This 177-nucleotide RNA was probed chemically with 2A3 and DMS. For 2A3 the reverse transcriptase was SuperScript II with manganese.
RNA sequence: GGGAACGACUCGAGUAGAGUCGAAAAAGCGUAUGGCGUUCACGCUGCUUCAGCGCGAUCGUAGCGGCGGGAUGCGUCUGGCGCAGGCGCUCACCCGGGCGAUGUCGGAAAUCGGCCACUGCGCCGAGCGUUGUACCCGAUUCGUCGGGUACAACGCAAAAGAAACAACAACAACAAC
Reactivity to 2A3 in 0.01 (KOAc 150mM, MgCl2 10mM, bicine 150mM(pH8.5), 24C), signal-to-noise 1, nucleotides 027 to 126: a000g030c010g010u010a030u230g030g010c020g000u000u000c060a000c020g000c010u030g000c020u090u030c060a110g120c050g050c080g140a140u190c030g020u030a000g010c000g010g000c000g000g020g000a030u130g000c000g000u000c030u050g000g020c000g000c010a000g010g010c020g020c000u010c020a110c020c010c060g030g030g000c030g030a040u080g070u110c070g080g040a170a200a010u140c000g070g000c050c010a060c070u040g000c000g000c000c000g010a010
Reactivity to DMS in 0.01 (KOAc 150mM, MgCl2 10mM, bicine 150mM(pH8.5), 24C), signal-to-noise 1, nucleotides 027 to 126: a060g020c010g010u020a080u020g010g000c030g000u000u000c030a040c040g010c000u000g020c060u000u010c030a110g030c090g030c180g000a040u000c050g020u000a020g010c000g000g030c000g020g000g010a010u000g010c000g030u000c010u020g010g020c000g070c000a030g010g020c000g030c000u010c090a100c030c010c020g010g020g030c020g010a030u000g000u000c120g000g000a040a110a140u010c020g040g000c010c150a080c090u000g010c050g000c010c020g020a090